[RMDB]
RNA sequence: GGGAACGACUCGAGUAGAGUCGAAAAAGGAGAGUAUCCUCAGGCGCUCGAGUGAUUCAUGGCUAAGGAACUCGGCAAAAUGGCCUCGUAACUUCGGGAGAAGAGGCGCCCCACUCCGGUGGGGCCGAUUACAUAUAUGUUUCGACAUAUAUGUAAUAAAAGAAACAACAACAACAAC
Reactivity to DMS in 0.01 (KOAc 150mM, MgCl2 10mM, bicine 150mM(pH8.5), 24C), signal-to-noise 9, nucleotides 027 to 126: a090g010g010a120g010a110g010u010a080u000c010c000u010c090a150g020g010c100g010c100u020c090g010a050g010u020g000a150u030u010c050a080u020g000g000c070u010a100a070g010g010a070a050c030u000c010g000g000c100a060a060a080a080u020g010g010c000c000u000c020g000u010a090a190c040u000u030c110g020g020g020a100g010a090a140g000a040g000g010c040g020c010c000c000c000a020c010u010c230c130g010g010u000g000g010g010g020c010c080g000
Reactivity to 2A3 in 0.01 (KOAc 150mM, MgCl2 10mM, bicine 150mM(pH8.5), 24C), signal-to-noise 9, nucleotides 027 to 126: a000g090g010a050g010a040g040u150a180u080c010c010u020c050a090g090g000c040g020c070u130c110g040a030g030u130g060a190u120u050c050a060u150g110g000c050u080a040a060g040g000a040a040c020u010c010g020g000c020a050a070a030a100u140g130g010c000c000u010c010g030u030a030a030c010u050u070c150g070g020g010a040g010a060a010g010a010g040g000c030g010c010c000c000c000a000c000u030c030c140g080g000u010g000g000g000g000c000c000g000
Conditions: 150 mM KOAc, 10 mM MgCl2 and 150 mM bicine (pH 8.5), 24 C. Structure probing data (DMS and 2A3) for a 177-nucleotide construct. Reactivities are given for positions 27 through 126.